The record gives the reactivity of an RNA of 177 nucleotides to 2A3 and DMS. The reactions ran in a buffer of 150 mM KOAc, 10 mM MgCl2 and 150 mM bicine (pH 8.5), at 24 C.
RNA sequence: GGGAACGACUCGAGUAGAGUCGAAAAGAUAUGGACCCUGACAUGAUCAGGUUCGGAAACGAACCGUGAUCAACAGCACGGGUCCUAAGUCAAAAGUUGAUUCUUAUCUUCGGAUAAGAAUCAACAACCAUACCGUUAGGUUCGCCUAACGGUAUGGAAAAGAAACAACAACAACAAC
Reactivity to 2A3 in 0.01 (KOAc 150mM, MgCl2 10mM, bicine 150mM(pH8.5), 24C), signal-to-noise 2, nucleotides 027 to 126: g020a010u060a030u120g000g000a010c000c010c000u040g040a090c030a150u090g000a000u010c010a010g020g000u000u000c000g030g010a050a070a030c010g000a000a000c000c000g040u030g000a010u000c000a040a080c080a020g080c030a030c130g000g000g000u000c000c000u010a090a010g050u020c050a070a030a040a140g000u010u000g000a010u000u000c000u000u000a000u000c010u040u110c300g050g000a000u000a010a000g020a000a010u000c000a000a000c000a000a010
Reactivity to DMS in 0.01 (KOAc 150mM, MgCl2 10mM, bicine 150mM(pH8.5), 24C), signal-to-noise 7, nucleotides 027 to 126: g000a040u010a300u010g000g000a020c000c000c000u000g010a300c140a180u000g000a010u000c000a150g000g010u000u000c000g000g000a060a080a110c000g010a010a000c000c000g000u010g010a000u000c000a030a080c300a110g010c050a090c280g000g000g010u010c000c000u000a010a080g000u010c030a080a070a110a130g000u000u000g010a010u000u000c000u000u000a000u000c010u000u010c200g020g010a010u000a000a000g000a000a000u000c000a000a010c000a090a090